[RMDB]
RNA sequence: GGGAACGACUCGAGUAGAGUCGAAAAGACAUCUCACGUUUGGCGGAUUUGAGUCUAAAUUAUGCUUAUCAUGCUUAUGUAGAUGGUCAUAUCCAGAACUUCUGUACACAGCUAUCUCAGCAAAUUCUCUUUUCAACUAAUUCGUUAGUUGAAAAGAAAAAGAAACAACAACAACAAC
Reactivity to 2A3 in 0.01 (KOAc 150mM, MgCl2 10mM, bicine 150mM(pH8.5), 24C), signal-to-noise 9, nucleotides 027 to 126: g010a000c010a030u010c010u020c020a060c050g030u070u100u130g060g000c040g010g030a030u060u040u100g040a040g030u010c060u110a040a190a150u270u170a090u180g010c000u050u060a050u130c040a080u150g010c000u060u050a040u130g050u040a010g000a030u020g050g030u030c010a020u040a030u110c010c010a020g050a080a060c020u110u050c040u090g050u080a030c060a000c020a080g010c010u040a030u110c040u010c060a030g010c040a030a060a160u180u030c040
Reactivity to DMS in 0.01 (KOAc 150mM, MgCl2 10mM, bicine 150mM(pH8.5), 24C), signal-to-noise 9, nucleotides 027 to 126: g010a090c070a050u000c020u000c130a070c080g010u000u010u010g010g030c040g010g000a060u000u010u000g010a060g010u000c150u010a050a090a110u010u010a060u010g010c010u000u010a070u010c110a060u010g020c010u000u000a050u010g010u000a020g010a030u000g010g010u000c020a070u000a100u000c040c030a100g010a070a090c070u000u010c040u000g000u000a070c090a060c120a090g010c040u000a050u000c050u000c050a090g010c090a050a060a120u010u000c080
Source information:
Conditions: 150 mM KOAc, 10 mM MgCl2 and 150 mM bicine (pH 8.5), 24 C. The record gives the reactivity of an RNA of 177 nucleotides to 2A3 and DMS. For DMS, 18,126 sequencing reads were counted. It was measured as part of the RMDB library OK2TRN.